[RMDB]
This 177-nucleotide RNA was probed chemically with 2A3 and DMS. The 2A3 profile rests on 1,635 reads. For DMS the reverse transcriptase was MarathonRT. The DMS profile rests on 2,021 reads. Reactivities are rounded to 0.1 and cut off at 0 and 3. Reactivities are given for positions 27 through 126.
RNA sequence: GGGAACGACUCGAGUAGAGUCGAAAAUCUGUCGCCGGAUGCGCCAUUUAUCAGUUUUAAUUGCGCCCAGUAUGCGAGCAAUCCCGAACUGCUGGCGGCGAAUCUUUUUGGCUAUGUGAAGGGCGCGGUGAUUAUCGGGGUUCGCCCCGAUAAUCACAAAAGAAACAACAACAACAAC
Reactivity to 2A3 in 0.01 (KOAc 150mM, MgCl2 10mM, bicine 150mM(pH8.5), 24C), signal-to-noise 4, nucleotides 027 to 126: u070c060u070g070u040c030g000c010c010g020g010a010u070g040c020g000c000c010a060u060u150u170a180u110c060a030g060u000u000u040u150a100a090u100u110g000c000g030c010c000c000a060g090u130a090u280g050c020g020a020g040c030a030a070u080c020c020c010g000a050a020c020u070g020c020u020g060g040c010g000g000c000g030a030a030u060c110u050u170u000u100u110g070g000c030u080a110u200g110u050g070a060a140g000g010g000c000g010c010g060
Reactivity to DMS in 0.01 (KOAc 150mM, MgCl2 10mM, bicine 150mM(pH8.5), 24C), signal-to-noise 1, nucleotides 027 to 126: u040c050u000g010u000c020g020c000c050g000g070a050u010g000c020g030c020c020a070u040u010u030a000u080c110a070g020u000u000u000u020a010a130u000u000g020c000g060c010c010c010a050g040u010a030u040g000c040g000a040g040c060a050a080u010c020c000c000g010a060a100c160u000g000c000u010g010g040c040g010g000c040g000a090a020u000c080u030u010u000u000u000g000g000c040u000a080u030g020u010g000a150a110g000g030g020c040g020c000g000